[RMDB]
RNA sequence: GGGAACGACUCGAGUAGAGUCGAAAACAAUCUCCAUGUCCUCUCGCCUGGGCCUCUUCGCCGGGGGUCCUCCCUCUUCGUCCUUCUUCUUUCUCAACAUUCCGACGAUGUUUCCCAGCCAGGGGUUUAAGUCGGACCUUCGGGUCCGACAAAAGAAACAACAACAACAAC
Reactivity to DMS in 0.01 (KOAc 150mM, MgCl2 10mM, bicine 150mM(pH8.5), 24C), signal-to-noise 3, nucleotides 027 to 129: c000a000a020u070c050u010c000c040a210u040g040u000c030c000u000c030u000c040g040c090c040u020g000g000g000c070c070u010c030u010u040c090g050c130c050g000g070g040g010g020u030c080c000u010c000c000c040u010c040u030u010c060g020u010c000c040u000u040c020u000u000c020u000u090u050c060u000c030a140a070c000a160u040u040c060c000g010a030c240g030a090u060g040u060u000u030c000c030c040a140g040c000c120a050g010g020g000g040u050u010u030a040a130
Reactivity to 2A3 in 0.01 (KOAc 150mM, MgCl2 10mM, bicine 150mM(pH8.5), 24C), signal-to-noise 2, nucleotides 027 to 129: c060a010a160u090c030u000c000c050a060u090g130u030c000c030u000c020u030c000g020c060c010u060g010g010g000c000c000u060c000u100u030c040g000c030c000g010g000g000g020g010u020c000c010u030c010c010c000u050c020u020u070c030g040u040c000c000u030u000c000u020u050c010u010u090u000c040u000c000a040a130c010a130u090u020c000c020g020a080c040g000a060u050g100u020u030u000c010c000c000a000g060c020c000a040g000g030g000g000u020u070u050a060a020

An RNA of 170 nucleotides, treated with DMS and 2A3 and read out base by base.
DMS adducts were read by reverse transcription with MarathonRT.
The DMS profile rests on 7,929 reads.
For 2A3 the reverse transcriptase was SuperScript II with manganese.